RNA sequence: GGGAACGACUCGAGUAGAGUCGAAAAGGUUCAUGGUUCGCCAUGAACCAAAAGUACAGCUAAGAGUACAAGUGUCAUAGCAAAAGAUCGAAAGAUCAAAAAAAAGUAGCUCCUUCGGGAGCUACAAGUGAUAUGUAACGUUCGCGUUACAUAUCACAAAAGAAACAACAACAACAAC
Reactivity to 2A3 in 0.01 (KOAc 150mM, MgCl2 10mM, bicine 150mM(pH8.5), 24C), signal-to-noise 1, nucleotides 027 to 126: g010g010u000u000c010a010u020g010g040u020u060c110g050c070c000a000u010g000a010a000c000c000a000a000a000a000g000u000a010c000a010g020c020u020a020a050g020a010g060u050a040c110a300a050g090u110g020u170c020a040u040a020g000c010a020a070a080a080g000a010u020c000g060a090a010a000g030a000u060c070a000a020a030a000a010a020a030a010g000u010a000g000c000u010c000c010u030u040c130g090g010g000a000g020c000u000a000c000a000a010
Reactivity to DMS in 0.01 (KOAc 150mM, MgCl2 10mM, bicine 150mM(pH8.5), 24C), signal-to-noise 2, nucleotides 027 to 126: g000g000u020u010c010a020u000g000g000u000u020c270g040c010c000a000u010g010a010a010c000c000a030a060a100a160g010u020a030c040a170g000c000u000a010a080g000a020g010u000a020c030a110a170g020u000g000u000c000a230u000a030g020c000a140a090a110a080g010a000u000c010g000a110a140a210g020a000u020c000a000a010a000a020a040a040a090a140g000u000a000g010c010u000c000c000u000u010c170g040g020g010a000g020c010u000a000c000a010a060
Source information
Conditions: 150 mM KOAc, 10 mM MgCl2 and 150 mM bicine (pH 8.5), 24 C. Chemical mapping of a 177-nucleotide RNA with 2A3 and DMS. For DMS the reverse transcriptase was MarathonRT. Values cover nucleotides 27 to 126. Source: RMDB library M2PK50, as collected in RNAgym.